[RMDB]
RNA sequence: GGGAACGACUCGAGUAGAGUCGAAAAGGGGGCGGGGGGACGCCGACCACCAUGACGACGACUCCGCCUCCGAGGCGGACAGCACGGACACGGAACUGUUCGAGACGGGGCUGCUGGGGCCGCAGGGGUAACUAGCUACGUUCGCGUAGCUAGUUACAAAAGAAACAACAACAACAAC
Reactivity to DMS in 0.01 (KOAc 150mM, MgCl2 10mM, bicine 150mM(pH8.5), 24C), signal-to-noise 3, nucleotides 027 to 126: g000g000g010g010g000c020g020g000g000g020g000g000a070c050g000c030c010g000a100c050c150a100c220c120a110u020g000a120c050g020a060c020g010a090c120u000c000c000g030c010c010u000c030c020g000a040g000g010c020g010g000a080c030a040g000c060a130c020g000g010a080c100a040c040g000g010a130a230c130u010g000u000u010c020g000a080g020a090c080g010g010g000g000c060u030g000c020u010g020g010g000g000c050c060g000c080a090g000g000g000
Reactivity to 2A3 in 0.01 (KOAc 150mM, MgCl2 10mM, bicine 150mM(pH8.5), 24C), signal-to-noise 4, nucleotides 027 to 126: g000g000g000g010g030c040g000g000g000g000g010g010a020c020g010c010c010g080a130c050c020a120c040c050a100u200g070a030c060g010a000c010g080a120c030u000c000c030g000c000c010u000c020c030g000a060g020g000c010g000g000a020c000a020g000c020a020c020g020g020a010c030a010c110g070g040a140a070c050u030g030u090u050c030g010a030g000a030c040g030g010g020g020c040u060g010c030u040g040g020g040g020c020c020g000c030a030g000g000g030